The record gives the reactivity of an RNA of 177 nucleotides to DMS and 2A3.
For DMS the reverse transcriptase was MarathonRT.
In probing experiments dimethyl sulfate is read out at A N1 and C N3, which are open when not base-paired.
The DMS profile rests on 13,462 reads.
The reactions ran in a buffer of 150 mM KOAc, 10 mM MgCl2 and 150 mM bicine (pH 8.5), at 24 C.
RNA sequence: GGGAACGACUCGAGUAGAGUCGAAAAAUGAUAUCCUCUCAGAUGAGCUGUCAAUGUGGCAUGUGUUUUAUACGGACGAUUACAAAGGCAGCAAUAGUAUCGUCCAUCAGGUGGGACUUCCUGUGGACGAUGGGUGAGUAUUCGUACUCACCCAUCGAAAAGAAACAACAACAACAAC
Reactivity to DMS in 0.01 (KOAc 150mM, MgCl2 10mM, bicine 150mM(pH8.5), 24C), signal-to-noise 9, nucleotides 027 to 126: a080u010g010a110u010a110u000c030c030u000c150u010c090a130g010a100u000g000a140g010c020u000g010u000c010a050a200u000g010u000g000g010c070a060u010g010u010g010u010u010u010u010a100u010a080c120g020g010a040c080g010a080u010u000a010c020a040a060a250g000g010c010a010g000c010a060a070u010a110g010u000a040u000c020g000u000c010c010a050u010c050a010g000g020u000g000g010g000a130c200u010u000c010c000u000g020u000g000g010a110
Reactivity to 2A3 in 0.01 (KOAc 150mM, MgCl2 10mM, bicine 150mM(pH8.5), 24C), signal-to-noise 4, nucleotides 027 to 126: a000u140g030a030u060a060u090c010c000u000c010u040c050a030g020a210u040g030a060g030c010u010g020u040c020a050a100u050g010u030g060g020c040a070u110g110u000g100u100u060u030u150a150u050a030c060g040g030a010c020g010a060u000u030a040c040a030a060a020g010g000c000a010g000c000a020a000u020a000g000u010a020u080c010g000u010c010c020a050u100c020a030g040g060u070g040g090g040a080c040u080u060c020c000u020g000u030g040g020a030